Source: RMDB library OK1LIB, as collected in RNAgym.
An RNA of 177 nucleotides, treated with 2A3 and DMS and read out base by base.
For 2A3, 4,566 sequencing reads were counted.
High 2A3 reactivity points to a flexible backbone, as in loops and unpaired stretches.
The reactions ran in a buffer of 150 mM KOAc, 10 mM MgCl2 and 150 mM bicine (pH 8.5), at 24 C.
For 2A3 the reverse transcriptase was SuperScript II with manganese.
For DMS the reverse transcriptase was MarathonRT.

RNA sequence: GGGAACGACUCGAGUAGAGUCGAAAACUGGAUACCGAAUAGGACCACGGCAUUCAUGUGCUGUGGUGGAAAGCUUAAGAGGUGUCCGACGGGCGGCGCGCCUAACAGCUUCUUAGAACGCGAACGGAAUUAAAUAAAAAUUCGUUUUUAUUUAAUUAAAAGAAACAACAACAACAAC
Reactivity to 2A3 in 0.01 (KOAc 150mM, MgCl2 10mM, bicine 150mM(pH8.5), 24C), signal-to-noise 6, nucleotides 027 to 126: c040u040g010g010a000u020a040c000c010g030a060a090u040a090g020g000a000c000c000a000c010g000g000c000a050u100u170c130a070u300g000u030g040c010u000g010u000g000g000u020g000g030a030a030a000g090c020u070u080a030a010g040a020g100g000u010g010u000c000c000g010a030c020g020g030g020c020g030g050c020g010c010g000c030c000u030a040a020c040a030g030c000u060u000c010u030u110a060g040a090a010c060g040c040g060a130a020c020g040g050
Reactivity to DMS in 0.01 (KOAc 150mM, MgCl2 10mM, bicine 150mM(pH8.5), 24C), signal-to-noise 7, nucleotides 027 to 126: c100u040g010g010a010u010a000c010c000g020a300a260u010a020g000g010a100c000c000a000c000g010g000c010a010u000u020c290a110u050g000u010g000c000u000g010u000g000g010u000g000g000a090a110a130g030c020u010u010a020a040g010a300g000g000u000g020u000c010c000g010a100c120g010g010g010c060g000g000c040g010c030g030c090c020u000a030a050c160a080g000c080u010u020c050u020u010a060g010a070a130c050g000c040g000a070a070c080g000g010